[RMDB]
RNA sequence: GGGAACGACUCGAGUAGAGUCGAAAACAGCCCGUCUUCGGACGGGCUGAAACCGGAAGCCGAAGCCGAACGGCAAGCCGAACCGGAACGGCAACCGCAAAAAAACCAUAAUGUUCGCAUUAUGGAACUUGAAUGUUUUCUUCGGAAAACAUUCAAGAAAAGAAACAACAACAACAAC
Reactivity to 2A3 in 0.01 (KOAc 150mM, MgCl2 10mM, bicine 150mM(pH8.5), 24C), signal-to-noise 1, nucleotides 027 to 126: c000a000g020c000c000c000g010u000c010u020u040c080g110g010a010c040g050g010g000c010u000g010a000a000a000c020c000g000g000a010a000g010c010c010g020a080a020g050c010c020g050a060a040c000g000g010c090a070a020g080c010c010g030a070a080c150c010g010g010a040a050c000g000g010c000a010a030c000c020g020c120a000a070a000a000a070a000a180c000c000a010u020a020a000u000g030u040u070c220g000c110a010u020u000a030u010g000g010a000a020
Reactivity to DMS in 0.01 (KOAc 150mM, MgCl2 10mM, bicine 150mM(pH8.5), 24C), signal-to-noise 1, nucleotides 027 to 126: c020a030g010c010c000c030g040u000c000u020u000c180g000g000a000c090g010g000g010c000u000g000a000a060a080c110c020g010g000a080a300g010c000c070g020a110a230g000c030c000g000a120a180c030g000g000c050a110a250g010c000c000g020a040a140c130c010g000g010a040a180c000g000g030c000a020a300c020c030g030c070a030a000a010a010a040a110a030c000c000a000u000a010a000u010g010u000u000c270g030c000a000u000u000a000u010g000g000a060a040